[RMDB]
Conditions: 150 mM KOAc, 10 mM MgCl2 and 150 mM bicine (pH 8.5), 24 C. An RNA of 207 nucleotides, treated with 2A3 and read out base by base. 2A3 adducts were read by reverse transcription with SuperScript II with manganese.
RNA sequence: GGGAACGACUCGAGUAGAGUCGAAAAAGCUGUACCGGCGCUCCAGCCUUCCUUGCGAGAACAUAUCGGCCAAGUUCACGGAGAUGGAGCAAUCCGCAAAUGGCUCGCCAAGCGUCACGAAUGGGAUAAGAAAUACAGCAAAGAUCUUGCUAAAUGGGAUCCGUUGUUAGUUCGCUAACAACGGAUCAAAAGAAACAACAACAACAAC
Reactivity to 2A3 in 0.01 (KOAc 150mM, MgCl2 10mM, bicine 150mM(pH8.5), 24C), signal-to-noise 2, nucleotides 027 to 156: a010g020c030u030g060u110a040c030c040g030g030c060g020c030u090c010c040a030g010c010c010u040u050c020c040u030u050g010c020g060a060g000a170a050c020a130u150a060u160c040g020g000c100c000a130a060g010u040u210c210a040c120g040g020a050g000a020u030g030g000a080g000c000a000a050u010c000c000g000c080a000a070a090u120g000g010c000u020c000g020c010c000a040a000g010c000g060u090c040a020c050g150a140a170u150g040g000g040a020u080a150a010g150a040a120a020u140a050c030a010g000c020a020a020a020g010a030u000c010u060u080g050c020u150a220a130a020u300g020g100